[RMDB]
RNA sequence: GGGAACGACUCGAGUAGAGUCGAAAAAGUAUUGGAAUAUGUGGAGAGAAAACUGUGAAAACUGCUUUUUCUGUUUAUAGUUGGUUUAUAGAGGAAGUAUUAGGAAACUGGGGCACAACAAUAAUACCUAUAAUACUCGAUUCGUCGAGUAUUAUAGAAAAGAAACAACAACAACAAC
Reactivity to DMS in 0.01 (KOAc 150mM, MgCl2 10mM, bicine 150mM(pH8.5), 24C), signal-to-noise 6, nucleotides 027 to 126: a100g000u010a050u010u010g010g020a080a070u010a050u010g020u010g000g010a090g010a100g000a070a060a060a070c070u010g020u020g000a080a060a100a080c090u010g010c050u010u010u010u000u010c020u020g010u010u010u000a040u010a080g000u010u010g000g010u000u010u000a060u010a070g000a060g010g010a020a030g020u000a050u010u020a060g000g010a040a050a060c050u000g000g010g020g010c050a030c050a030a040c090a050a070u010a050a080u020a080c140
Reactivity to 2A3 in 0.01 (KOAc 150mM, MgCl2 10mM, bicine 150mM(pH8.5), 24C), signal-to-noise 5, nucleotides 027 to 126: a000g140u100a090u100u120g030g030a110a050u070a080u180g060u060g010g040a050g000a010g020a090a050a030a050c070u050g010u060g100a050a030a050a050c020u010g040c020u040u050u000u040u020c020u020g080u030u080u030a130u050a070g030u020u090g080g010u030u100u040a080u050a020g040a010g010g000a020a020g000u050a070u140u100a040g010g060a060a040a010c020u030g000g000g020g000c030a010c010a030a070c010a030a020u110a110a050u070a080c020
Background:
The record gives the reactivity of an RNA of 177 nucleotides to DMS and 2A3. For 2A3 the reverse transcriptase was SuperScript II with manganese. The reactions ran in a buffer of 150 mM KOAc, 10 mM MgCl2 and 150 mM bicine (pH 8.5), at 24 C.